Source: RMDB library OK1LIB, as collected in RNAgym. This 177-nucleotide RNA was probed chemically with 2A3. Reactivities are given for positions 27 through 126.
RNA sequence: GGGAACGACUCGAGUAGAGUCGAAAAACACUGCGCUACCUUUCCGUGGCCAAAUGCGAGCGGGUCUCGGAUGCGGGGCUAAAGGUGAUUGCCAGGCGGUGCUAUAAGCUGCGCUAUCUGAACGCUCGGGCUCGCAUAUCUUCGGAUAUGCGAGCCCAAAAGAAACAACAACAACAAC
Reactivity to 2A3 in 0.01 (KOAc 150mM, MgCl2 10mM, bicine 150mM(pH8.5), 24C), signal-to-noise 1, nucleotides 027 to 126: a000c080a000c100u100g050c040g000c060u160a220c010c000u050u130u010c000c000g000u020g000g000c030c000a000a090a270u300g080c030g040a010g000c020g000g000g080u060c010u010c050g000g000a020u010g060c080g030g000g000g030c000u050a000a000a300g000g000u100g060a250u060u180g100c030c040a080g010g030c000g000g000u060g060c010u110a000u010a230a000g010c030u220g000c020g000c010u050a000u000c100u030g020a040a030c030g000c030u030c020